An RNA of 177 nucleotides, treated with 2A3 and DMS and read out base by base. For DMS the reverse transcriptase was MarathonRT. The reactions ran in a buffer of 150 mM KOAc, 10 mM MgCl2 and 150 mM bicine (pH 8.5), at 24 C. For DMS, 4,568 sequencing reads were counted. The 2A3 profile rests on 8,754 reads.
RNA sequence: GGGAACGACUCGAGUAGAGUCGAAAAGAUAUGGACCAUUUCUUGCGGGAGUGCCUUACUCGGAAACGAGUAAGAGCACAUCGAUCGCAAGAGAAUGGUCCUAAGUCAAACCCACCUUCGGGUGGGAUCAGGAGUAACUGUUCGCAGUUACUCCUGAAAAAGAAACAACAACAACAAC
Reactivity to 2A3 in 0.01 (KOAc 150mM, MgCl2 10mM, bicine 150mM(pH8.5), 24C), signal-to-noise 3, nucleotides 027 to 126: g020a030u080a050u200g000g000a000c000c000a010u000u000u000c010u000u000g010c030g000g000g020a080g000u000g020c020c000u000u010a010c000u000c010g020g050a100a090a040c010g000a000g020u000a010a000g010a020g000c010a010c000a110u030c000g070a130u090c010g000c020a010a000g020a020g070a010a040u010g000g000u000c000c000u000a030a010g010u000c000a020a030a220c000c000c000a010c020c010u040u090c300g180g000g000u020g000g010g010a030
Reactivity to DMS in 0.01 (KOAc 150mM, MgCl2 10mM, bicine 150mM(pH8.5), 24C), signal-to-noise 4, nucleotides 027 to 126: g000a050u010a300u000g020g000a000c000c000a000u000u000u000c000u000u000g010c000g000g000g000a050g010u000g010c000c000u010u000a000c000u000c000g020g000a070a080a270c020g010a020g010u000a010a010g010a210g010c000a010c010a100u000c200g000a090u010c000g020c000a010a010g000a030g000a010a020u000g000g000u000c000c000u000a000a080g000u000c040a120a130a190c010c000c000a000c010c000u020u010c170g020g020g040u000g000g010g010a030